RNA sequence: GGGAACGACUCGAGUAGAGUCGAAAAAGAUCCACGGGAAGAUUCGAUCCCCCGAUACUUUUACAGUUCUAUCGUCAUCGUCAUAUCCCAGAAAUCGAAGAUAUCAGUUCCAUAGCUACAAAGUAUACAGGGAUAUGGUGUUCGCACCAUAUCCCUGAAAAGAAACAACAACAACAAC
Reactivity to DMS in 0.01 (KOAc 150mM, MgCl2 10mM, bicine 150mM(pH8.5), 24C), signal-to-noise 1, nucleotides 027 to 126: a090g000a070u010c030c130a160c160g000g000g000a010a010g010a240u000u000c070g040a060u000c050c070c000c130c100g000a090u010a060c010u000u000u030u030a060c100a080g010u010u000c110u020a040u020c090g010u030c100a050u000c060g010u000c060a010u000a060u000c010c000c010a130g000a050a080a080u000c020g000a100a100g020a130u010a070u020c100a100g000u000u000c010c010a090u020a070g020c060u060a060c160a080a010a110g000u000a030u010a100
Conditions: 150 mM KOAc, 10 mM MgCl2 and 150 mM bicine (pH 8.5), 24 C.
The record gives the reactivity of an RNA of 177 nucleotides to DMS.
It was measured as part of the RMDB library OK2TST.
For DMS, 631 sequencing reads were counted.